[RMDB]
RNA sequence: GGGAACGACUCGAGUAGAGUCGAAAACUCGUCUUUGGGAGGAUGCUGAGCGUCGUUUAGAAGACUUGCUGAUGCAGUUGAGCCUCAGGGCUGCAUCGGGACUUUAACUGCGGAUAUGCUCGCCAUCAGUUGUCUGCGACAUCGAUGGGGGCAGAAACAGACAGACCGAGUUCGCUCGGUCUGUCUGAAAAGAAACAACAACAACAAC
Reactivity to 2A3 in 0.01 (KOAc 150mM, MgCl2 10mM, bicine 150mM(pH8.5), 24C), signal-to-noise 1, nucleotides 027 to 156: c030u010c050g000u020c010u030u000u050g150g080g030a060g060g000a040u030g010c070u220g070a050g060c020g010u040c030g060u030u020u100a150g020a070a000g000a000c000u020u300g000c000u000g000a000u000g020c000a010g000u000u000g000a000g050c000c000u040c000a000g000g000g000c000u000g010c000a000u000c000g000g000g000a000c030u040u230u260a170a010c000u020g000c000g000g000a000u010a030u020g000c000u000c020g300c020c000a020u010c030a150g020u060u010g000u030c050u260g080c180g060a010c000a000u010c040g000a000u000g000g000g010g000g000c000a000g030a010a050a000